[RMDB]
RNA sequence: GGGAACGACUCGAGUAGAGUCGAAAAACACGGAACUUCGGUUCCGUGUAUAGGGACGAAAUAACACGAUACCGCUUGUCGCCCGAGCAAAAAGGCGGAAAAACUGCAUCCUCUUCGGAGGAUGCAAUCAAAUUUUCACUUUCGAGUGAAAAUUUGAAAAAGAAACAACAACAACAAC
Reactivity to 2A3 in 0.01 (KOAc 150mM, MgCl2 10mM, bicine 150mM(pH8.5), 24C), signal-to-noise 2, nucleotides 027 to 126: a000c000a010c000g000g000a000a010c020u080u100c240g060g000u000u010c000c020g000u010g000u010a010u040a000g010g000g040a010c070g110a090a060a140u200a120a060c040a020c140g020a020u040a070c010c000g000c020u030u030g000u000c000g020c010c020c020g020a060g060c130a030a110a030a030a040g020g000c010g040g000a040a000a090a000a000c050u070g000c000a010u010c010c010u020c020u040u060c150g060g010a000g000g000a000u000g000c000a000a000
Reactivity to DMS in 0.01 (KOAc 150mM, MgCl2 10mM, bicine 150mM(pH8.5), 24C), signal-to-noise 2, nucleotides 027 to 126: a030c000a010c000g000g020a000a000c000u010u010c190g030g000u000u000c000c000g010u000g000u000a010u000a040g020g000g020a110c130g010a100a070a090u000a080a090c160a260c070g000a020u000a080c010c000g000c020u000u000g000u010c000g000c010c000c010g020a140g010c240a030a060a040a050a030g000g000c000g000g010a090a020a030a070a090c220u010g000c000a010u000c000c000u000c000u000u000c160g020g000a030g030g020a000u000g000c000a030a020